[RMDB]
RNA sequence: GGGAACGACUCGAGUAGAGUCGAAAAUGUAAAUAGCGCAACAGGUGCCAUAUACAAACUGCCUUUUUUUCGUUUUAGUUUACUUAUUGUGAAAUGUAAAUAUGUCCCACUGCUCAAUUUUUAACGGCAUCUAAAUCUUGUUCGCAAGAUUUAGAUGAAAAGAAACAACAACAACAAC
Reactivity to DMS in 0.01 (KOAc 150mM, MgCl2 10mM, bicine 150mM(pH8.5), 24C), signal-to-noise 4, nucleotides 027 to 126: u000g010u000a040a060a060u000a060g020c120g030c040a080a080c160a090g010g010u000g010c050c070a060u000a100u010a110c110a030a080a100c110u000g020c000c000u000u010u000u010u010u020u010c050g010u000u000u000u000a080g010u000u000u000a020c030u010u010a070u010u010g010u010g000a070a060a060u010g010u010a010a020a030u000a070u000g010u000c000c010c010a120c140u000g000c060u000c090a050a040u010u020u010u020u010a060a140c200g010g000
Reactivity to 2A3 in 0.01 (KOAc 150mM, MgCl2 10mM, bicine 150mM(pH8.5), 24C), signal-to-noise 4, nucleotides 027 to 126: u060g000u020a060a020a060u040a080g030c030g010c040a010a100c000a120g110g040u040g050c020c010a050u140a020u040a150c040a020a180a030c040u040g000c000c000u060u070u030u010u000u020u110c020g000u050u010u000u030a040g000u040u000u020a030c010u080u090a090u150u160g070u030g060a110a100a050u060g000u030a020a020a020u110a070u110g030u010c000c000c010a010c050u020g030c000u010c050a050a190u030u120u030u070u130a080a040c050g050g010

Notes: The record gives the reactivity of an RNA of 177 nucleotides to DMS and 2A3. The reactions ran in a buffer of 150 mM KOAc, 10 mM MgCl2 and 150 mM bicine (pH 8.5), at 24 C. Reactivities are rounded to 0.1 and cut off at 0 and 3. The DMS profile rests on 3,598 reads. DMS adducts were read by reverse transcription with MarathonRT.